[RMDB]
RNA sequence: GGGAACGACUCGAGUAGAGUCGAAAACGGGGUUGGAUCCGACUCUCAUAGGCUCUCCAACCCAACUCCUACUCAAUACGUCCUCGUCGUACAGAACGGUAACAUGUUUUCCGAACAUCCGCGCUUGCGAAGAAUGUUUCUUCGGAAACAUUCUUCGAAAAGAAACAACAACAACAAC
Reactivity to DMS in 0.01 (KOAc 150mM, MgCl2 10mM, bicine 150mM(pH8.5), 24C), signal-to-noise 2, nucleotides 027 to 126: c300g010g000g000g020u000u000g000g020a050u010c010c000g000a110c300u010c220u000c120a100u010a180g010g000c060u010c030u000c000c000a000a020c010c000c000a040a030c090u000c040c020u000a030c060u010c030a090a100u010a130c080g030u000c030c010u000c020g000u020c030g010u000a130c150a050g010a110a100c040g010g000u010a100a040c080a090u020g000u010u010u000u000c060c070g000a070a110c100a050u000c040c030g010c070g010c080u000u000g010
Reactivity to 2A3 in 0.01 (KOAc 150mM, MgCl2 10mM, bicine 150mM(pH8.5), 24C), signal-to-noise 3, nucleotides 027 to 126: c060g000g010g010g000u000u040g020g040a080u300c020c030g130a110c050u070c000u010c140a160u190a180g000g020c010u000c000u000c020c010a000a000c010c000c000a010a010c000u000c000c010u020a020c010u020c030a030a110u100a170c040g060u020c010c020u030c020g040u030c020g000u050a040c050a060g090a060a010c020g000g030u050a030a040c040a100u140g040u080u010u030u080c020c030g030a040a030c020a060u000c030c010g050c010g030c130u060u120g050